[RMDB]
RNA sequence: GGGAACGACUCGAGUAGAGUCGAAAAGAAAACUGCACAUGUAGCAGGUAAUACAUGUAAAAACGUCAAGUCUGGACGGUAAAAGACUUAAAAACGCGCAUAGCACGCGGUAAUGCUAUGAAAGAAAGGGAAUGAUAUUCUUCGGAAUAUCAUUCCCAAAAGAAACAACAACAACAAC
Reactivity to DMS in 0.01 (KOAc 150mM, MgCl2 10mM, bicine 150mM(pH8.5), 24C), signal-to-noise 2, nucleotides 027 to 126: g010a070a020a100a300c100u010g000c000a080c000a000u000g000u000a000g030c030a050g000g040u050a140a050u020a020c030a000u030g000u120a080a080a060a160a150c050g000u010c060a070a050g030u000c050u010g020g000a100c000g000g000u040a050a030a060a010g020a020c020u020u050a030a070a000a110a300c010g000c040g010c110a020u000a010g000c000a000c000g000c000g020g000u000a010a080u010g000c070u000a010u000g000a140a070a040g010a140a120a120
Reactivity to 2A3 in 0.01 (KOAc 150mM, MgCl2 10mM, bicine 150mM(pH8.5), 24C), signal-to-noise 2, nucleotides 027 to 126: g050a000a060a030a020c000u000g000c020a000c000a190u010g010u010a000g070c060a010g200g000u080a000a070u000a030c020a030u010g060u060a110a030a020a060a000c060g000u010c070a010a040g010u000c010u050g090g060a010c040g020g000u010a000a000a000a050g000a000c020u030u210a090a000a120a000a040c000g000c000g010c000a000u000a050g000c000a000c030g000c000g100g000u020a000a020u000g040c000u010a000u020g080a080a080a010g170a090a060a000
Notes:
The record gives the reactivity of an RNA of 177 nucleotides to DMS and 2A3. 2A3 adducts were read by reverse transcription with SuperScript II with manganese. High 2A3 reactivity points to a flexible backbone, as in loops and unpaired stretches. It was measured as part of the RMDB library OK1LIB. The 2A3 profile rests on 4,697 reads. The DMS profile rests on 2,753 reads.